[RMDB]
The record gives the reactivity of an RNA of 307 nucleotides to DMS. For DMS the reverse transcriptase was MarathonRT. DMS (dimethyl sulfate) methylates the pairing face of unpaired adenines and cytosines. Values cover nucleotides 27 to 266. The RNA was probed in 150 mM KOAc, 10 mM MgCl2 and 150 mM bicine (pH 8.5) at 24 C.
RNA sequence: GGGAACGACUCGAGUAGAGUCGAAAAAGUCAGCUAUACGUAGCUGACAAGCAUCCGCGGCUCAGCCAAGCUGUUGUUUUAAAAGAGCAAUAAAAAUGAAUUAUGACUAAACGCCUUCUAACUUAAUGCUUUCGGACGGGGAUCCCCGGCAAAUAACGUAAGAGGAUUUUUAUUUGUGCAUGUGUUCCUGCAAUUGAUCUCUUUGAUGACAUUCUCAUUCAUAGAAAGCGUUUGAUUUAUGAGCGUAGGACGAAUCGCAUCCAGGAACAAUACUUUUCGAAGUAUUGAAAAGAAACAACAACAACAAC
Reactivity to DMS in 0.01 (KOAc 150mM, MgCl2 10mM, bicine 150mM(pH8.5), 24C), signal-to-noise 1, nucleotides 027 to 266: a170g000u020c000a010g000c000u000a010u000a180c120g020u000a010g030c000u000g010a020c010a010a070g010c100a060u030c040c000g040c120g000g020c000u000c050a160g030c050c050a160a150g020c040u010g000u000u000g010u000u000u020u010a020a050a100a110g030a050g000c020a070a090u040a020a030a040a180a110u000g000a080a140u010u010a040u010g020a080c110u010a100a040a060c010g000c050c040u000u000c030u000a060a130c050u000u010a060a110u000g010c050u000u000u000c090g010g010a090c130g030g030g000g000a050u000c050c080c080c100g020g000c030a050a000a050u000a040a090c200g000u000a050a020g000a020g030g030a020u000u000u000u000u020a050u000u020u040g000u000g020c060a020u000g010u000g010u010u010c010c040u000g000c050a040a020u030u000g000a050u010c020u000c010u000u000u000g000a190u000g010a020c060a090u010u010c080u000c030a050u000u000c050a110u000a020g000a000a030a070g020c050g030u000u000u000g000a100u000u000u000a000u020g000a100g000c060g060u000a100g000g000a070c080g000a090a080u000c110g020c070a060u010c100c050a030g010g010a050a170